[RMDB]
The record gives the reactivity of an RNA of 177 nucleotides to DMS. The RNA was probed in 150 mM KOAc, 10 mM MgCl2 and 150 mM bicine (pH 8.5) at 24 C. It was measured as part of the RMDB library OK2TRN. For DMS, 1,536 sequencing reads were counted. For DMS the reverse transcriptase was MarathonRT.

RNA sequence: GGGAACGACUCGAGUAGAGUCGAAAAGGUCUCGAAGGGCGUGCCGCGAGCCCCUUCGCCAGCCUCUCCGGUGGCGAGAAGCAGCGCGCCCUGCUGGCUCGCGCGCUGGUCCAGGAACCGCGCCUGAUACGAUAGGCGCGUUCGCGCGCCUAUCGUAAAAAGAAACAACAACAACAAC
Reactivity to DMS in 0.01 (KOAc 150mM, MgCl2 10mM, bicine 150mM(pH8.5), 24C), signal-to-noise 1, nucleotides 027 to 126: g030g010u000c040u010c030g020a120a050g010g000g000c030g020u000g000c000c020g020c010g020a120g010c040c020c290c060u000u010c000g010c010c010a000g020c010c010u000c180u010c290c130g010g030u000g000g020c020g000a020g020a170a080g010c000a010g000c040g000c060g010c020c030c010u010g000c030u000g010g010c020u000c020g000c120g010c030g000c000u010g020g000u000c020c060a150g000g010a070a030c060c010g020c030g000c010c050u010g000a180